The data come from the RNA Mapping Database (RMDB), library OK2TRN. This 177-nucleotide RNA was probed chemically with 2A3 and DMS. Values cover nucleotides 27 to 126. The DMS profile rests on 12,288 reads. The RNA was probed in 150 mM KOAc, 10 mM MgCl2 and 150 mM bicine (pH 8.5) at 24 C.
[RMDB]
RNA sequence: GGGAACGACUCGAGUAGAGUCGAAAAAUGAUUUUUAUCUGCAAAAUAAGAACCCUGUCUUACCAGUGGAAUCGUUGGUAGGGGAGUCUCCUGGACCAAGGCACAUUUUGCAAUGAGCUCUUCUACACUGUUAAGUUGAAUUCGUUCAACUUAACAGAAAAGAAACAACAACAACAAC
Reactivity to 2A3 in 0.01 (KOAc 150mM, MgCl2 10mM, bicine 150mM(pH8.5), 24C), signal-to-noise 6, nucleotides 027 to 126: a000u040g020a030u060u080u060u110u180a120u050c060u030g010c010a020a020a030a050u080a090a080g070a110a070c020c000c000u020g080u010c020u020u020a030c010c010a030g020u060g090g100a120a090u120c060g070u070u090g080g000u010a020g010g010g020g010a020g030u020c010u010c030c020u030g040g030a070c060c060a040a020g010g000c020a040c010a070u050u100u060u070g000c050a040a070u100g020a030g010c010u010c010u080u000c000u020a030c040a010
Reactivity to DMS in 0.01 (KOAc 150mM, MgCl2 10mM, bicine 150mM(pH8.5), 24C), signal-to-noise 8, nucleotides 027 to 126: a070u010g000a030u000u010u010u000u000a050u010c070u000g010c050a030a030a050a040u000a080a080g000a100a150c100c060c030u000g000u000c030u000u000a050c030c010a050g020u000g010g010a070a060u000c070g010u010u000g020g020u000a030g010g010g010g000a050g010u000c030u000c050c060u010g010g010a070c120c090a040a040g000g010c120a060c120a060u000u000u000u000g010c050a040a070u010g000a070g010c070u000c050u000u000c020u000a040c090a250